[RMDB]
RNA sequence: GGGAACGACUCGAGUAGAGUCGAAAAUUCUCAGUACACCGAGAAAGCCGAUGGGGUGAUUUUCCAGACUGCGGUUUAAAAAGUCAGCGCACGCGCUGCGCAUAAACGACACAAUGCCCGGUGAAUGAUGCCUAAUAGUUUUCGAACUAUUAGGCAUAAAAGAAACAACAACAACAAC
Reactivity to 2A3 in 0.01 (KOAc 150mM, MgCl2 10mM, bicine 150mM(pH8.5), 24C), signal-to-noise 4, nucleotides 027 to 126: u010u000c010u000c010a020g050u090a040c020a010c020c010g020a020g050a140a070a000g010c040c020g100a140u060g000g000g010g110u060g130a120u070u140u170u010c030c010a030g030a070c050u060g040c030g030g020u020u080u120a010a090a000a000a000g020u020c020a020g010c010g000c030a010c030g270c020g060c220u020g010c010g000c000a000u120a020a070a020c110g020a000c000a000c020a050a050u040g020c000c010c000g000g000u010g000a050a070u100g030
Reactivity to DMS in 0.01 (KOAc 150mM, MgCl2 10mM, bicine 150mM(pH8.5), 24C), signal-to-noise 7, nucleotides 027 to 126: u000u000c010u000c010a180g020u010a140c050a030c030c020g000a080g000a150a100a170g010c020c020g000a080u000g010g020g000g020u000g000a100u000u000u010u000c040c040a090g000a100c100u010g010c060g010g010u000u000u000a040a070a120a090a070g000u000c020a170g010c010g020c010a030c090g030c210g020c150u000g020c020g020c010a050u000a030a080a130c120g000a040c020a040c140a060a060u000g010c030c010c000g010g000u000g000a140a090u010g010

Annotation: Chemical mapping of a 177-nucleotide RNA with 2A3 and DMS. It was measured as part of the RMDB library OK2TST. The RNA was probed in 150 mM KOAc, 10 mM MgCl2 and 150 mM bicine (pH 8.5) at 24 C.